[RMDB]
RNA sequence: GGGAACGACUCGAGUAGAGUCGAAAAGGAUGAUCUGGGCCCGGCCAGUGAUCCGAAUUAGUACCGGGAUUGCAUCGUCGAGCCGUCAGGGGCGAAGACGAGAACCUGAAAGCACGAAGCACAGGGCGGUGCGUGUGCGAGAUAUAACGCCCAACAAGAGGAUAAUCCACUUCGGUGGAUUAUCCUCAAAAGAAACAACAACAACAAC
Reactivity to DMS in 0.01 (KOAc 150mM, MgCl2 10mM, bicine 150mM(pH8.5), 24C), signal-to-noise 1, nucleotides 027 to 156: g040g040a100u010g010a080u000c000u000g020g010g020c070c010c010g010g000c050c000a190g000u010g000a080u020c050c060g010a090a180u000u000a130g040u000a060c000c020g000g010g010a130u010u000g000c050a090u000c030g010u000c030g030a140g030c020c000g020u000c030a060g030g000g010g000c010g000a070a050g000a170c110g010a300g010a060a040c030c010u010g010a080a020a080g000c010a160c000g010a080a080g020c040a020c120a100g010g030g060c000g000g000u000g010c000g030u000g000u000g000c000g000a120g010a100u000a050u000a080a040c030g000c010c000c020a040a050c060a260a300
Reactivity to 2A3 in 0.01 (KOAc 150mM, MgCl2 10mM, bicine 150mM(pH8.5), 24C), signal-to-noise 1, nucleotides 027 to 156: g020g000a060u110g010a070u080c010u000g010g000g030c000c000c000g000g010c000c020a010g000u050g080a020u000c020c020g050a030a080u120u100a070g110u090a040c010c010g000g010g030a040u030u220g010c010a020u010c000g030u020c030g010a010g010c010c030g170u290c150a090g130g060g020g000c030g040a130a020g060a010c020g000a000g000a050a080c020c030u060g040a090a060a000g010c000a000c040g120a100a040g010c020a000c000a070g020g000g000c010g010g000u000g000c030g010u120g010u000g030c000g040a000g040a040u180a000u030a130a040c000g000c000c010c000a020a010c080a050a010
Source: RMDB library OK3TST, as collected in RNAgym.
Structure probing data (DMS and 2A3) for a 207-nucleotide construct.
High DMS reactivity at an A or C suggests that its Watson-Crick edge is free.
The reactions ran in a buffer of 150 mM KOAc, 10 mM MgCl2 and 150 mM bicine (pH 8.5), at 24 C.